[RMDB]
RNA sequence: GGGAACGACUCGAGUAGAGUCGAAAACCAUCAUGAGAUGGGCCACAUCCAGUAUGACAUGGCGUAUGCCGCACAGCCCUACCUGCUCAGGAAUGGCGCUAAUGAAGGUUUCCAUGAGGCUGUCGGGCUAUGGGCCGACGUUCGCGUCGGCCCAUAGAAAAGAAACAACAACAACAAC
Reactivity to 2A3 in 0.01 (KOAc 150mM, MgCl2 10mM, bicine 150mM(pH8.5), 24C), signal-to-noise 3, nucleotides 027 to 126: c000c000a060u070c010a020u300g120a010g070a250u060g040g070g010c040c030a090c000a040u050c040c000a050g070u120a200u140g040a040c040a050u050g030g000c050g010u130a090u170g050c010c000g050c010a000c000a020g000c010c020c000u050a010c030c010u090g010c030u020c140a020g050g040a070a010u040g060g000c000g000c090u100a100a100u170g070a120a070g040g050u060u050u020c010c000a050u100g060a070g070g040c000u030g000u010c000g040g000g030
Reactivity to DMS in 0.01 (KOAc 150mM, MgCl2 10mM, bicine 150mM(pH8.5), 24C), signal-to-noise 2, nucleotides 027 to 126: c000c020a250u060c060a110u020g000a100g030a010u000g000g000g010c010c020a080c030a090u050c000c010a060g000u040a200u020g000a130c050a030u000g000g020c110g020u000a060u010g000c000c000g000c140a110c000a050g000c000c000c000u000a070c040c000u020g000c020u020c100a050g000g020a060a030u030g000g020c300g070c050u040a080a110u030g030a130a020g000g000u000u000u040c050c100a040u000g020a150g000g010c010u000g000u010c030g010g000g040
Structure probing data (2A3 and DMS) for a 177-nucleotide construct. Conditions: 150 mM KOAc, 10 mM MgCl2 and 150 mM bicine (pH 8.5), 24 C. Source: RMDB library OK1LIB, as collected in RNAgym.